This 177-nucleotide RNA was probed chemically with 2A3 and DMS. The reactions ran in a buffer of 150 mM KOAc, 10 mM MgCl2 and 150 mM bicine (pH 8.5), at 24 C. For 2A3 the reverse transcriptase was SuperScript II with manganese. Source: RMDB library OK1LIB, as collected in RNAgym.
RNA sequence: GGGAACGACUCGAGUAGAGUCGAAAAACGUCGAUGCUCAGGGCGACCUGAUUGUCGGUAAGUACGCUAUGGGUCACGGCGGUCUGCGUCCAGAAGCGGCAGGCGCACUGGUUUUCAAGGCAGCGUCUAUGUCGGCUUCAUUCGUGAAGCCGACAUAAAAAGAAACAACAACAACAAC
Reactivity to 2A3 in 0.01 (KOAc 150mM, MgCl2 10mM, bicine 150mM(pH8.5), 24C), signal-to-noise 1, nucleotides 027 to 126: a000c080g020u020c010g020a090u070g000c000u000c030a000g000g030g000c000g090a100c000c000u000g020a050u020u020g090u030c010g000g000u060a190a060g020u030a030c010g000c000u030a130u130g000g000g080u020c020a000c020g030g000c030g010g030u000c020u050g000c000g020u010c020c010a050g000a100a050g060c000g050g000c080a020g120g010c000g000c010a010c060u060g000g020u030u030u110u290c150a100a000g010g000c010a000g020c090g020u000c000
Reactivity to DMS in 0.01 (KOAc 150mM, MgCl2 10mM, bicine 150mM(pH8.5), 24C), signal-to-noise 1, nucleotides 027 to 126: a180c060g000u000c050g000a000u000g050c100u050c000a050g010g010g000c260g000a100c000c020u000g000a100u020u000g030u040c040g000g030u060a000a020g010u020a020c020g000c010u000a100u000g010g000g000u010c100a090c120g000g040c070g000g000u050c030u000g000c110g030u090c010c010a030g000a090a010g000c000g000g000c140a100g010g030c020g090c000a130c000u000g000g000u000u000u090u010c150a150a070g000g010c030a010g000c020g000u060c050